[RMDB]
RNA sequence: GGGAACGACUCGAGUAGAGUCGAAAAAUUGGUACGUGAUGAUCCUCGUGGAUGUGGACGAUGUGUUUCGUUCGUCGGUGCAGCCAUAAGAUGACUGCUAGGAACGUUACCAAUCCGAGCAGAGUGAAUAAAUAGUAAUAUUCGUAUUACUAUUUAUAAAAGAAACAACAACAACAAC
Reactivity to 2A3 in 0.01 (KOAc 150mM, MgCl2 10mM, bicine 150mM(pH8.5), 24C), signal-to-noise 6, nucleotides 027 to 126: a000u030u030g010g000u030a010c030g020u070g040a080u080g010a040u030c010c030u080c070g100u130g050g010a050u030g030u090g060g010a010c020g000a010u040g150u030g050u170u100u100c040g010u010u020c010g010u020c020g030g120u110g000c020a000g010c000c010a040u050a130a100g080a070u110g030a050c020u020g000c010u020a020g060g030a060a010c030g020u050u050a010c010c000a000a030u010c010c010g030a040g020c050a030g060a110g130u150g050a130
Reactivity to DMS in 0.01 (KOAc 150mM, MgCl2 10mM, bicine 150mM(pH8.5), 24C), signal-to-noise 9, nucleotides 027 to 126: a100u000u000g000g010u000a020c030g020u000g010a160u010g010a090u000c010c010u010c220g030u010g010g010a040u000g020u000g010g010a040c010g010a030u000g020u010g010u010u000u000c040g010u000u000c010g020u000c030g010g020u000g010c010a020g010c010c010a050u010a090a130g020a300u000g010a060c010u000g010c010u000a110g010g010a090a030c050g000u000u010a020c010c020a030a050u000c020c020g010a090g010c130a070g000a170g010u010g000a120
This 177-nucleotide RNA was probed chemically with 2A3 and DMS.
The reactions ran in a buffer of 150 mM KOAc, 10 mM MgCl2 and 150 mM bicine (pH 8.5), at 24 C.
For 2A3, 9,090 sequencing reads were counted.
2A3 adducts were read by reverse transcription with SuperScript II with manganese.
It was measured as part of the RMDB library OK2TST.